[RMDB]
RNA sequence: GGGAACGACUCGAGUAGAGUCGAAAAAAGUUCAGAAAAAAAGGAUAGGUGCAGAGACUCAAUGGAAGCUAUUCUAACAAAUGGAGUUGACAACAUUCAAUUGAUUAAUGAAGAUUUCUAACUUCUACGGUAUAGGUAAGUUCGCUUACCUAUACCGAAAAGAAACAACAACAACAAC
Reactivity to 2A3 in 0.01 (KOAc 150mM, MgCl2 10mM, bicine 150mM(pH8.5), 24C), signal-to-noise 1, nucleotides 027 to 126: a030a000g060u070u060c050a090g110a070a150a000a000a010a010a000g060g000a040u020a090g200g000u090g000c030a030g030a020g040a110c030u010c150a010a050u110g030g010a020a000g010c030u000a070u100u030c040u040a100a040c040a020a100a030u070g030g010a000g060u040u080g010a040c040a090a010c020a080u000u130c030a020a070u060u160g040a060u170u170a050a050u080g020a010a000g070a080u050u080u000c040u060a000a100c020u050u030c010u000a060
Reactivity to DMS in 0.01 (KOAc 150mM, MgCl2 10mM, bicine 150mM(pH8.5), 24C), signal-to-noise 2, nucleotides 027 to 126: a040a080g040u020u000c100a050g020a030a010a050a080a120a060a140g000g000a060u000a040g020g030u020g010c060a030g000a210g000a080c040u000c080a050a080u010g000g010a130a020g000c120u000a040u010u000c040u000a030a060c140a040a070a110u000g010g010a020g020u000u000g000a090c100a060a060c080a050u000u000c030a020a090u000u000g000a080u000u000a050a040u000g000a030a030g000a120u000u010u000c040u010a020a080c100u000u000c020u000a100
The record gives the reactivity of an RNA of 177 nucleotides to 2A3 and DMS. The reactions ran in a buffer of 150 mM KOAc, 10 mM MgCl2 and 150 mM bicine (pH 8.5), at 24 C. 2A3 adducts were read by reverse transcription with SuperScript II with manganese. Values cover nucleotides 27 to 126. For DMS, 1,139 sequencing reads were counted.